[RMDB]
Conditions: 150 mM KOAc, 10 mM MgCl2 and 150 mM bicine (pH 8.5), 24 C. Structure probing data (2A3 and DMS) for a 177-nucleotide construct. Reactivities are rounded to 0.1 and cut off at 0 and 3. Values cover nucleotides 27 to 126. High 2A3 reactivity points to a flexible backbone, as in loops and unpaired stretches. The 2A3 profile rests on 2,996 reads.
RNA sequence: GGGAACGACUCGAGUAGAGUCGAAAAGCCGUGGGGUUCGAAAACGAUCCGGCGGCGGCCUGGGAGGGCCUUCACGCGGGUCCUCAAGGGGAGAACCACCGAUGGAGAAUACGCUCCUCAUCGGACUCAAAGUCACCCUAUUCGUAGGGUGACUUUGAAAAGAAACAACAACAACAAC
Reactivity to 2A3 in 0.01 (KOAc 150mM, MgCl2 10mM, bicine 150mM(pH8.5), 24C), signal-to-noise 4, nucleotides 027 to 126: g010c010c010g000u070g030g090g010g020u070u090c060g080a130a110a190a240c080g010a020u010c010c010g070g000c000g000g000c010g020g010c010c000u110g080g080g030a000g000g000g000c000c020u110u120c140a100c120g080c140g020g010g000u000c000c000u000c000a000a040g030g000g000g000a120g020a040a040c020c040a030c000c000g000a000u020g050g010a030g030a120a020u170a180c090g040c150u020c000c010u020c020a020u020c010g010g010a030c030u000
Reactivity to DMS in 0.01 (KOAc 150mM, MgCl2 10mM, bicine 150mM(pH8.5), 24C), signal-to-noise 2, nucleotides 027 to 126: g000c000c000g140u000g000g000g020g010u000u040c050g010a150a160a080a150c200g010a000u000c000c020g000g000c040g010g010c000g000g010c000c010u000g000g030g020a040g000g010g030c010c000u010u000c090a090c300g000c130g020g010g050u000c000c010u000c000a020a030g000g000g000g000a120g000a200a270c000c010a300c010c050g040a000u000g030g040a000g010a110a140u050a190c230g000c080u000c030c000u000c050a010u020c000g000g050a280c070u010